[RMDB]
RNA sequence: GGGAACGACUCGAGUAGAGUCGAAAACACUAAAAACCUUUUCAACCCAACCCCAGCUACACCCAGAGUCUAGGACCGGAGUCCUGAUCAUCUAUCCCAGCCGAACCCUCUGGAAUGGGGGGCCAAACUAUACGACUCCUUUCGAGGAGUCGUAUAGAAAAGAAACAACAACAACAAC
Reactivity to DMS in 0.01 (KOAc 150mM, MgCl2 10mM, bicine 150mM(pH8.5), 24C), signal-to-noise 1, nucleotides 027 to 126: c090a040c060u010a030a160a140a210a040c060c010u000u000u000u000c060a120a190c000c060c010a080a230c070c060c000c050a130g010c080u000a070c070a090c100c010c030a100g010a070g020u020c030u010a110g010g020a040c120c100g030g000a110g050u000c010c000u000g010a030u000c130a010u000c090u010a060u020c030c000c020a180g010c050c090g030a070a090c090c100c000u000c000u000g000g010a140a040u000g000g000g020g020g000g010c060c160a050a090a150